[RMDB]
RNA sequence: GGGAACGACUCGAGUAGAGUCGAAAAUCUACCGCCUCAAUCCGCUCAAGUUCGCCUCCACUUGGCAGGUGAUAAAGGAUUGGUACAGCGCGUACCUCGCAAAGGCGGUGGACAGGAAGUACGUGAGUAUUCAUGCCUCGUUCGCGAGGCAUGAAUAAAAAGAAACAACAACAACAAC
Reactivity to 2A3 in 0.01 (KOAc 150mM, MgCl2 10mM, bicine 150mM(pH8.5), 24C), signal-to-noise 1, nucleotides 027 to 126: u010c000u000a010c000c000g030c010c000u040c000a020a010u010c000c000g080c050u070c220a120a050g040u040u010c040g020c030c020u030c030c040a290c300u130u100g010g000c120a010g020g000u020g000a030u040a010a140a000g000g020a000u000u030g000g000u010a060c110a060g070c090g010c040g140u020a030c020c020u020c030g000c080a150a070a000g000g080c000g020g000u020g000g010a040c020a000g020g190a080a080g020u020a020c010g040u180g070a000g090
Reactivity to DMS in 0.01 (KOAc 150mM, MgCl2 10mM, bicine 150mM(pH8.5), 24C), signal-to-noise 2, nucleotides 027 to 126: u000c040u000a020c010c020g020c010c000u010c040a040a010u010c010c010g010c170u010c270a060a180g020u020u000c010g000c000c000u000c020c000a300c300u000u010g020g010c170a010g000g030u000g030a040u010a050a070a090g000g000a010u000u020g010g010u000a040c170a100g000c150g000c080g010u000a040c010c000u010c070g020c100a070a070a070g030g020c010g010g000u000g000g010a020c110a070g010g010a110a030g000u010a020c020g010u000g000a200g000